[RMDB]
RNA sequence: GGGAACGACUCGAGUAGAGUCGAAAAGGCGGGGCGUUCGCGCCCCGCCAAAGUCGGUUUGCGUAAUAAUUAAUCGUACGCAUCGAUUAAUAUCCGACAUUAAAAGCCGAUCAUUCGUGAUCGGCAAGGUAUACUGGAAUUUCGAUUCCAGUAUACCAAAAGAAACAACAACAACAAC
Reactivity to 2A3 in 0.01 (KOAc 150mM, MgCl2 10mM, bicine 150mM(pH8.5), 24C), signal-to-noise 2, nucleotides 027 to 126: g010g010c000g040g070g020g040c060g000u090u100c130g030c000g070c110c060c000c020g050c030c000a010a000a000g000u000c010g000g040u030u060u060g050c010g020u010a050a020u060a090a080u120u200a080a070u090c060g020u020a030c040g000c080a050u080c020g030a000u060u090a040a000u030a050u060c010c010g050a030c040a040u190u250a070a160a050a010g000c000c000g000a000u000c000a040u050u120c210g090u020g000a000u000c000g000g000c000a000a000
Reactivity to DMS in 0.01 (KOAc 150mM, MgCl2 10mM, bicine 150mM(pH8.5), 24C), signal-to-noise 2, nucleotides 027 to 126: g080g110c060g150g080g080g110c040g160u010u010c160g010c030g140c010c010c020c000g090c060c010a000a030a030g000u000c000g000g000u000u000u000g000c030g000u000a050a020u000a080a070u020u000a020a070u000c110g010u000a070c090g030c110a030u010c000g000a010u000u010a020a070u000a070u010c010c000g000a040c040a170u000u010a050a070a090a110g000c000c000g000a000u000c000a030u010u000c140g040u010g040a000u000c000g000g020c000a000a000